[RMDB]
RNA sequence: GGGAACGACUCGAGUAGAGUCGAAAAGCGUACUACGACCUCAUCAACAGCAGGCACUACCCACCACGGAUCCCAAAUAGGAUCCGUGAGGUGCCUGACAUGAUGUGGUCGUAUCGCAAAAUCGACGACGUCUAGGUUCGCCUAGACGUCGUCGAAACCUAAUGAAGACGUUCGCGUCUUCAUUAGGAAAAGAAACAACAACAACAAC
Reactivity to DMS in 0.01 (KOAc 150mM, MgCl2 10mM, bicine 150mM(pH8.5), 24C), signal-to-noise 2, nucleotides 027 to 156: g010c000g020u010a050c130u000a020c010g010a050c030c000u020c000a020u000c010a020a130c070a250g000c000a060g000g030c010a010c010u010a010c040c020c040a300c140c000a020c020g020g000a020u000c000c000c020a040a140a230u000a040g000g030a010u000c010c020g000u000g010a020g030g020u000g070c000c020u000g020a040c030a300u000g010a020u000g000u000g000g040u010c010g000u000a000u010c010g020c010a070a050a160a130u000c000g000a000c010g010a020c000g000u020c010u000a010g010g020u000u010c300g000c010c000u000a000g000a000c000g020u000c000g050u010c000g020a020a020a080
Reactivity to 2A3 in 0.01 (KOAc 150mM, MgCl2 10mM, bicine 150mM(pH8.5), 24C), signal-to-noise 4, nucleotides 027 to 156: g010c010g030u070a090c050u000a010c040g000a000c000c010u010c000a000u000c000a010a150c030a140g080c000a000g020g000c010a000c000u100a070c050c080c040a030c000c020a000c020g000g000a000u020c000c000c080a190a300a190u300a120g000g000a000u010c000c010g000u000g000a000g010g000u000g000c000c000u010g030a010c000a030u070g000a000u000g010u030g000g010u000c000g010u000a000u020c000g010c000a060a040a000a130u040c000g010a000c000g010a000c000g010u000c000u000a000g010g070u040u050c210g040c050c000u000a000g000a010c000g000u000c000g000u000c000g000a010a000a000
An RNA of 207 nucleotides, treated with DMS and 2A3 and read out base by base. Source: RMDB library RNAMAK, as collected in RNAgym. The reactions ran in a buffer of 150 mM KOAc, 10 mM MgCl2 and 150 mM bicine (pH 8.5), at 24 C. For DMS the reverse transcriptase was MarathonRT. 2A3 adducts were read by reverse transcription with SuperScript II with manganese.